[RMDB]
RNA sequence: GGGAACGACUCGAGUAGAGUCGAAAAAGUCAUCAGUUCGAGCCUGAUUAUCCCUAAGCCCAAUGUGAGUUUUUCUAGUUGGAUUUGCUCCCCCGCCGUCGUUCAAUGAGAAUGGAUAAGAGGCUCGCAGCCUAAUAGGCUUCGGCCUAUUAGGCUGAAAAGAAACAACAACAACAAC
Reactivity to 2A3 in 0.01 (KOAc 150mM, MgCl2 10mM, bicine 150mM(pH8.5), 24C), signal-to-noise 3, nucleotides 027 to 126: a010g200u100c050a150u040c050a080g050u140u130c000g000a000g000c000c010u130g030a300u030u010a030u020c040c000c000u040a100a030g030c010c010c010a070a060u090g050u070g090a110g070u080u030u030u030u020c050u050a080g020u040u050g090g030a150u100u000u090g010c030u050c000c000c000c000c000g060c020c010g000u020c010g000u040u040c040a080a060u160g040a040g040a190a090u090g040g020a000u000a000a010g010a000g040g000c050u020c030g000
Reactivity to DMS in 0.01 (KOAc 150mM, MgCl2 10mM, bicine 150mM(pH8.5), 24C), signal-to-noise 2, nucleotides 027 to 126: a060g030u020c080a060u050c120a050g010u050u010c020g000a030g010c030c000u000g020a130u000u000a000u000c000c010c110u020a110a100g010c020c000c010a060a050u030g040u000g020a130g000u020u000u010u000u010c020u020a160g030u010u000g000g000a160u000u020u010g000c000u000c000c000c000c000c000g020c000c080g020u000c040g030u010u020c000a070a080u020g010a100g000a140a030u030g000g010a030u000a040a020g000a040g000g010c020u020c040g050